[RMDB]
RNA sequence: GGGAACGACUCGAGUAGAGUCGAAAAGCGGCAGUCACAGCGUCAGCGACCGCAGGGCGAGGCCCGACUGGGACGCCUGAAGCCGGGGCUCUACCUCGUCACCGCCUCGCGGCUGGACGCGCCCGCCCAGGUUAGUGUCUUUCGAGACACUAACCUGAAAAGAAACAACAACAACAAC
Reactivity to 2A3 in 0.01 (KOAc 150mM, MgCl2 10mM, bicine 150mM(pH8.5), 24C), signal-to-noise 2, nucleotides 027 to 126: g030c080g030g020c010a030g010u050c050a040c020a300g010c040g120u100c040a070g020c020g010a030c060c060g020c040a050g060g000g000c000g020a010g000g070c020c020c000g000a020c030u040g020g000g110a080c130g200c070c010u130g130a050a030g000c010c000g000g000g010g000c030u080c060u240a110c010c000u000c010g030u030c030a070c270c040g010c000c000u020c010g030c000g000g000c000u020g000g010a010c000g040c030g000c040c030c000g010c010c010
Reactivity to DMS in 0.01 (KOAc 150mM, MgCl2 10mM, bicine 150mM(pH8.5), 24C), signal-to-noise 2, nucleotides 027 to 126: g010c070g000g000c000a220g020u020c030a100c020a030g010c010g010u010c060a130g000c010g010a030c200c160g010c040a040g000g000g010c030g000a010g000g000c030c010c010g010a040c020u010g000g010g000a090c220g000c080c020u000g000a130a040g000c010c010g020g000g000g020c070u010c150u000a300c020c010u000c020g000u000c000a090c040c040g030c020c130u000c000g000c000g000g000c000u000g010g000a020c000g000c100g000c020c000c000g010c020c040